[RMDB]
RNA sequence: GGGAACGACUCGAGUAGAGUCGAAAACAGAGACCCCCUGCCCCCUGAAACCCUUCCAUGGACCUCAGGUUUAGAAUCUCUCCAUUAAGCCAUGAGCAUGAUUAUUUGAAAGUUAAAAUGAGGCCAGUCAUACUGCGAAGUUCGCUUCGCAGUAUGAAAAAGAAACAACAACAACAAC
Reactivity to DMS in 0.01 (KOAc 150mM, MgCl2 10mM, bicine 150mM(pH8.5), 24C), signal-to-noise 2, nucleotides 027 to 126: c040a080g000a170g010a300c060c020c010c040c020u000g000c010c020c000c000c030u010g000a060a080a100c060c020c030u010u010c040c020a100u010g010g000a100c080c020u020c060a030g000g010u010u010u010a040g010a080a090u010c010u000c000u000c040c070a100u010u010a050a070g010c060c060a050u000g010a090g020c100a090u000g010a090u000u000a100u010u010u000g010a070a090a070g020u000u000a040a030a070a090u000g010a020g000g020c010c020a090g000